Chemical mapping of a 207-nucleotide RNA with 2A3. For 2A3 the reverse transcriptase was SuperScript II with manganese.
[RMDB]
RNA sequence: GGGAACGACUCGAGUAGAGUCGAAAAAAAAACGCUGGGUAUCGGUUUGAGCAGGGACAGCUAUGAAGUGACUGAAGCGCGCACGGUCAUGGAGCUGUCUAUUGGCUUUAUCGAUACCUGUGCUGAAGCGCGCACGGCAACCGAAAGGUGCGAAAAAGAUAUUAGAGGUGUUCGCACCUCUAAUAUCAAAAGAAACAACAACAACAAC
Reactivity to 2A3 in 0.01 (KOAc 150mM, MgCl2 10mM, bicine 150mM(pH8.5), 24C), signal-to-noise 1, nucleotides 027 to 156: a020a020a000a010a040c050g000c020u040g000g020g020u000a000u000c000g040g090u030u290u300g020a000g000c000a020g020g000g050a000c000a010g000c010u080a300u300g020a020a000g010u000g000a000c000u020g010a130a040g030c000g000c000g020c000a010c020g010g010u000c000a020u030g020g010a010g010c010u010g010u020c010u010a110u020u110g190g010c010u040u020u020a010u020c000g020a000u000a000c000c000u000g000u010g010c010u010g040a090a050g000c000g010c000g000c000a000c020g000g000c010a010a010c000c000g050a060a020a010g020g000u010g020c030g050a020a090a000a000a070